[RMDB]
RNA sequence: GGGAACGACUCGAGUAGAGUCGAAAACAGAACUGGAUGGGCCGUGUGCUUAACCAGGACAAGAUCUCCUUCUCUCCAACGUUGUUGCCAACUCAUGAUUCUCCUAACCUGUGCUUGGAGAGAGGUGCUACCAUAUAGGUGUUCGCACCUAUAUGAAGUAACAUCUUGUAUUCGUACAAGAUGUUACAAAAGAAACAACAACAACAAC
Reactivity to DMS in 0.01 (KOAc 150mM, MgCl2 10mM, bicine 150mM(pH8.5), 24C), signal-to-noise 2, nucleotides 027 to 156: c050a120g000a050a150c020u010g020g010a200u000g030g000g000c000c030g030u010g020u000g000c020u010u010a080a110c020c010a070g040g020a140c080a110a080g010a090u020c020u000c010c000u000u000c000u000c000u010c010c010a030a090c110g010u010u000g010u010u000g020c020c050a110a100c090u000c060a120u010g020a150u000u000c020u020c020c030u000a050a060c000c010u020g010u000g020c080u010u000g040g010a040g000a010g000a020g000g010u010g030c040u010a180c090c000a020u000a000u010a010g020g020u000g020u000u000c300g050c020a020c000c010u000a010u000a000u010g000a070a130
Reactivity to 2A3 in 0.01 (KOAc 150mM, MgCl2 10mM, bicine 150mM(pH8.5), 24C), signal-to-noise 3, nucleotides 027 to 156: c050a050g070a080a060c010u010g030g030a050u060g110g050g000c060c080g300u180g100u300g090c000u040u020a070a020c000c010a010g000g080a020c070a030a100g030a180u040c020u000c020c000u150u060c020u000c000u020c000c020a040a070c090g020u020u030g000u020u040g090c070c030a050a040c130u070c150a120u090g080a160u150u070c040u030c060c010u060a090a130c010c060u100g060u140g110c060u050u020g000g000a000g000a000g000a010g010g010u050g020c020u090a110c070c020a010u010a000u000a000g000g020u000g030u070u010c180g000c070a000c000c000u000a000u000a000u000g010a040a010
Chemical mapping of a 207-nucleotide RNA with DMS and 2A3. For 2A3, 1,729 sequencing reads were counted.